[RMDB]
RNA sequence: GGGAACGACUCGAGUAGAGUCGAAAAGAAAAUUGGCUUUGCUAUGUUAGCUUUAGGUGUUUUUGCACUUUCAGCUAUAAUUAUUUUUAGCUAGUAGAAUACAAGUUAGACGUAAUACUGUAGGAAUAGUAUGCAGCAAUUUCGAUUGCUGCAUACUAAAAGAAACAACAACAACAAC
Reactivity to 2A3 in 0.01 (KOAc 150mM, MgCl2 10mM, bicine 150mM(pH8.5), 24C), signal-to-noise 2, nucleotides 027 to 126: g070a070a110a010a020u160u140g000g000c020u080u110u120g050c050u050a000u150g040u000u000a000g000c000u030u000u000a000g000g020u020g120u010u090u150u160u300g020c020a000c000u000u000u000c000a010g020c010u000a020u000a020a080u040u100a080u060u270u000u000u040a000g010c000u020a020g010u040a040g130a250a040u150a080c030a030a010g010u040u020a030g060a010c070g000u060a070a080u110a120c120u080g070u090a040g030g010a030a020u080
Reactivity to DMS in 0.01 (KOAc 150mM, MgCl2 10mM, bicine 150mM(pH8.5), 24C), signal-to-noise 1, nucleotides 027 to 126: g020a060a030a110a080u010u000g000g000c060u030u010u010g030c070u000a050u000g040u020u000a020g010c010u000u000u000a000g020g030u000g010u000u010u000u020u100g010c000a010c020u000u030u000c080a010g040c000u000a000u050a070a010u000u000a040u000u000u000u040u020a020g000c010u000a020g010u000a130g000a150a090u020a060c080a060a060g010u000u010a000g010a050c130g010u000a000a010u010a100c100u000g010u000a010g010g000a080a110u010
This 177-nucleotide RNA was probed chemically with 2A3 and DMS.
The RNA was probed in 150 mM KOAc, 10 mM MgCl2 and 150 mM bicine (pH 8.5) at 24 C.
Reactivities are given for positions 27 through 126.